[RMDB]
RNA sequence: GGGAACGACUCGAGUAGAGUCGAAAACUGGAUUCCGGAUACAGGAUCAGCCGCAGUAUUUUUACGUGAAGUCUGAGGGAUUCCGGCAUAUCGAAGUGAAAGUGAAGAAUAAGAAAUUUUACUAUCUACAUUCGGACGCUUUUGAAUAUUGCGUGCAGUGAAGGACUCUAUUCGUAGAGUCCUUCACAAAAGAAACAACAACAACAAC
Reactivity to 2A3 in 0.01 (KOAc 150mM, MgCl2 10mM, bicine 150mM(pH8.5), 24C), signal-to-noise 1, nucleotides 027 to 156: c010u040g050g000a020u100u050c020c050g000g000a060u250a160c050a030g040g030a030u060c050a040g030c000c000g000c000a030g000u040a080u000u070u060u080u060a070c020g030u060g110a070a070g040u120c020u060g010a070g120g070g060a050u130u030c030c000g040g000c020a040u090a000u120c010g000a030a050g030u040g050a240a020a000g010u130g030a010a010g020a130a110u210a140a030g030a020a010a160u040u210u040u000a050c050u010a100u080c000u000a090c010a050u090u100c000g080g000a000c010g010c050u000u000u150u120g050a040a040u000a020u040u060g070c060g060u210g060c010a000

The record gives the reactivity of an RNA of 207 nucleotides to 2A3. For 2A3, 446 sequencing reads were counted. Values cover nucleotides 27 to 156.